[RMDB]
RNA sequence: GGGAACGACUCGAGUAGAGUCGAAAAGACCGAGACGGGUGAAAUUAAGGGACAUUACUUGAAUGCUACUGCAGGUACAUGCGAAGAAAUGAUGAAAAGGGCAGUAUUUGCCAGAGAAUUGGGAGUUCCUAUCGUCAUGCAUGACUAUCUGACGGGAGACGGAAUGUUGGUUCGCCAACAUUCCGUCAAAAGAAACAACAACAACAAC
Reactivity to 2A3 in 0.01 (KOAc 150mM, MgCl2 10mM, bicine 150mM(pH8.5), 24C), signal-to-noise 1, nucleotides 027 to 156: g010a030c000c070g020a010g010a070c000g020g030g000u070g050a020a110a000u150u210a010a120g000g000g030a010c030a050u120u130a050c090u080u060g040a160a010u020g100c020u020a040c040u040g010c000a000g020g000u000a010c000a020u010g030c030g020a150a000g060a090a030a010u050g010a010u040g030a060a110a040a050g000g030g000c010a000g010u040a100u080u040u020g000c020c010a010g080a010g040a180a130u090u010g000g000g000a020g010u080u040c000c000u050a120u040c040g000u000c000a010u050g020c020a080u050g050a120c060u020a010u040c000u000g050a080c010g000g000g000a050
Background: This 207-nucleotide RNA was probed chemically with 2A3. For 2A3, 573 sequencing reads were counted. It was measured as part of the RMDB library OK3TST.